Background: This 207-nucleotide RNA was probed chemically with 2A3 and DMS.

RNA sequence: GGGAACGACUCGAGUAGAGUCGAAAAUAAGCAAAAGACAACCACCUUUCCCGCUGACAAUAGCGUUAUCCCUCUGCACUUCGGUAAUAUUAGGGCACAGUAAAUCCCGCAAGGAUGAGAAUGUGAUUAAACAGUUACAGCUUCGGCUGUAACUGAACCAAGGAUAUACGUUCGCGUAUAUCCUUGGAAAAGAAACAACAACAACAAC
Reactivity to 2A3 in 0.01 (KOAc 150mM, MgCl2 10mM, bicine 150mM(pH8.5), 24C), signal-to-noise 4, nucleotides 027 to 156: u110a010a010g070c060a030a050a080a000g080a100c060a060a060c050c020a040c010c040u030u050u040c030c020c000g010c060u060g040a110c060a140a160u130a100g040c020g040u050u050a100u100c010c000c000u010c050u030g020c030a050c050u060u080c070g050g000u060a060a040u030a120u120u120a070g030g030g000c010a010c000a030g030u030a000a020a060u000c020c010c000g080c030a000a060g010g000a010u020g010a010g020a030a030u040g010u020g040a030u060u170a100a180a050c000a000g000u000u000a000c000a000g000c000u030u080c130g130g000c000u010g000u000a000a000c000u000g010a000a000
Reactivity to DMS in 0.01 (KOAc 150mM, MgCl2 10mM, bicine 150mM(pH8.5), 24C), signal-to-noise 3, nucleotides 027 to 156: u000a070a110g010c050a100a050a080a110g010a130c040a130a140c030c030a110c040c040u010u000u030c030c020c040g040c070u000g010a120c090a060a120u000a040g050c050g000u020u000a080u000c020c000c000u000c070u000g020c040a080c050u000u000c030g030g010u000a040a090u000a110u000u000a080g040g020g040c020a050c030a040g000u000a050a120a090u000c000c000c010g050c150a090a180g020g030a080u010g010a110g000a090a150u020g020u000g000a110u010u010a060a090a120c000a000g000u000u000a030c000a000g000c000u000u000c300g030g000c020u010g000u000a000a000c000u000g010a020a120
The reactions ran in a buffer of 150 mM KOAc, 10 mM MgCl2 and 150 mM bicine (pH 8.5), at 24 C. Source: RMDB library M2RFPK, as collected in RNAgym. For DMS the reverse transcriptase was MarathonRT. 2A3 adducts were read by reverse transcription with SuperScript II with manganese.